RNA sequence: GGGAACGACUCGAGUAGAGUCGAAAAGAUAUGGAAUGCAAUACUGGCUUGGACCUAGGGUCGGAAACGACCCUAGCUAGCCAAUUGUCAUUCCUAAGUCAAAGAGUACGGGUUCGCCCGUACUCAAGUUUUACACUAACUUCGGUUAGUGUAAAACAAAAGAAACAACAACAACAAC
Reactivity to DMS in 0.01 (KOAc 150mM, MgCl2 10mM, bicine 150mM(pH8.5), 24C), signal-to-noise 5, nucleotides 027 to 126: g000a020u000a060u010g000g000a030a010u000g000c010a010a020u010a300c300u010g010g010c000u000u000g010g000a020c300c000u000a010g000g010g010u010c000g000g000a010a010a040c000g010a010c000c000c010u000a000g010c000u010a010g030c000c010a080a030u000u000g000u020c010a020u000u000c000c000u000a000a120g000u000c010a110a140a190g000a010g010u000a000c010g010g000g010u000u010c250g010c000c000c000g010u000a000c000u000c000a020a060
Reactivity to 2A3 in 0.01 (KOAc 150mM, MgCl2 10mM, bicine 150mM(pH8.5), 24C), signal-to-noise 3, nucleotides 027 to 126: g010a000u030a000u060g000g000a010a000u010g000c000a000a030u060a270c300u230g000g040c010u110u300g050g020a020c010c000u010a000g000g020g000u010c000g000g000a030a020a000c010g000a010c000c000c000u010a000g000c010u000a000g000c010c000a010a020u010u010g050u120c010a000u000u000c000c000u000a020a000g010u000c030a110a070a200g010a000g000u010a000c000g000g060g050u050u110c300g110c050c000c000g000u000a000c000u000c000a000a000

Record summary
Structure probing data (DMS and 2A3) for a 177-nucleotide construct. The reactions ran in a buffer of 150 mM KOAc, 10 mM MgCl2 and 150 mM bicine (pH 8.5), at 24 C. For DMS, 6,814 sequencing reads were counted. The 2A3 profile rests on 12,526 reads. It was measured as part of the RMDB library TTRDES.